[RMDB]
An RNA of 177 nucleotides, treated with 2A3 and DMS and read out base by base. Reactivities are rounded to 0.1 and cut off at 0 and 3. The data come from the RNA Mapping Database (RMDB), libraries RFM100 and RFMREP. For DMS the reverse transcriptase was MarathonRT. The reactions ran in a buffer of 150 mM KOAc, 10 mM MgCl2 and 150 mM bicine (pH 8.5), at 24 C.
RNA sequence: GGGAACGACUCGAGUAGAGUCGAAAAGACUUUUGGGUUAAAUCCGGGAAGUAGUGAGACCCCUACCGAAAGGGACAGGUGCCGAAAGCACAGGAAGGAAGGGUCAAGAACAGGUCAGUGAUGCCCUCGCUUCAAUGUUUUUCGAAACAUUGAAGCGAAAAGAAACAACAACAACAAC
Reactivity to 2A3 in 0.01 (KOAc 150mM, MgCl2 10mM, bicine 150mM(pH8.5), 24C), signal-to-noise 3, nucleotides 027 to 126: g020a000c000u060u020u040u090g010g040g000u040u100a040a080a130u100c020c000g020g010g020a050a030g020u180a020g060u020g090a010g020a020c020c000c000c020u040a060c010c010g100a100a080a000g060g000g000a050c090a050g050g000u020g030c030c050g270a130a040a000g010c030a010c010a010g050g030a020a010g030g000a020a030g010g000g000u000c030a020a000g080a020a010c030a000g030g090u060c030a010g050u020g050a070u130g020c030c000c000u020
Reactivity to DMS in 0.01 (KOAc 150mM, MgCl2 10mM, bicine 150mM(pH8.5), 24C), signal-to-noise 2, nucleotides 027 to 126: g000a020c000u000u000u020u000g020g000g000u010u000a050a120a060u020c030c000g000g020g000a040a070g000u000a060g000u000g000a210g000a040c030c000c020c060u040a110c020c000g030a060a120a170g000g000g020a080c050a090g010g000u000g010c010c010g040a180a100a210g000c000a020c020a080g000g000a030a010g000g000a300a130g010g000g000u020c020a020a040g010a180a050c120a060g000g000u010c070a080g000u000g010a110u030g000c000c000c070u030